[RMDB]
RNA sequence: GGGAACGACUCGAGUAGAGUCGAAAAUCUGCGCCGCGCAAUUACCAAAAUUCUUCAGGCAUCCUACCGGCAUGACUUUCAACAUGCAGCUCCAAGAACAUCUUAGGCGCAUUGCCGUUAAGAUAGGCAGUAGCCAUGAAUUCGUUCAUGGCUACUGAAAAGAAACAACAACAACAAC
Reactivity to 2A3 in 0.01 (KOAc 150mM, MgCl2 10mM, bicine 150mM(pH8.5), 24C), signal-to-noise 4, nucleotides 027 to 126: u040c010u050g020c030g010c020c020g050c020g030c050a030a110u100u050a150c020c030a010a050a050a140u100u050c030u040u090c050a030g000g000c000a030u090c010c000u020a040c030c060g030g010c010a020u050g040a060c050u140u230u120c080a100a080c010a080u070g000c000a010g030c020u000c020c010a070a020g040a090a050c030a100u040c040u070u060a040g050g000c020g000c070a050u030u210g000c000c000g050u040u070a040a030g030a100u050a050g080g000
Reactivity to DMS in 0.01 (KOAc 150mM, MgCl2 10mM, bicine 150mM(pH8.5), 24C), signal-to-noise 5, nucleotides 027 to 126: u010c070u000g020c060g020c040c000g000c130g010c110a110a060u000u000a100c050c070a040a060a090a110u000u010c040u000u000c090a080g010g000c050a080u000c040c020u010a070c070c030g010g010c030a040u000g020a070c120u010u010u010c130a090a090c080a040u000g000c050a080g010c030u000c030c050a060a100g010a080a090c090a040u000c040u000u000a090g020g000c010g010c160a110u010u000g000c010c010g010u010u000a030a040g010a060u000a140g020g010